[RMDB]
RNA sequence: GGGAACGACUCGAGUAGAGUCGAAAAAGGGCCCCAGGUCAGGAGACCUGGGCUCCAGGGCCAGUUGAGAGUGAUAAAGAGAACAAUACCUGCCCACAGGACUUGUUGCAAUGAGAUAAAGGCAGAAGACCUGAUCCUAAUUCGUUAGGAUCAGGUCAAAAGAAACAACAACAACAAC
Reactivity to DMS in 0.01 (KOAc 150mM, MgCl2 10mM, bicine 150mM(pH8.5), 24C), signal-to-noise 1, nucleotides 027 to 126: a110g000g020g030c300c030c010c060a020g000g020u020c020a140g000g020a230g010a030c010c000u010g000g000g000c000u000c010c020a070g010g020g010c080c020a130g000u000u000g020a140g000a070g010u010g000a050u000a060a050a040g020a100g010a090a050c060a070a080u000a090c120c010u000g000c060c050c030a100c140a050g020g000a120c140u000u000g010u000u000g000c030a040a060u000g000a030g000a120u000a080a100a110g000g000c020a020g010a060a180
The record gives the reactivity of an RNA of 177 nucleotides to DMS.
Reactivities are rounded to 0.1 and cut off at 0 and 3.
The RNA was probed in 150 mM KOAc, 10 mM MgCl2 and 150 mM bicine (pH 8.5) at 24 C.
The DMS profile rests on 647 reads.
High DMS reactivity at an A or C suggests that its Watson-Crick edge is free.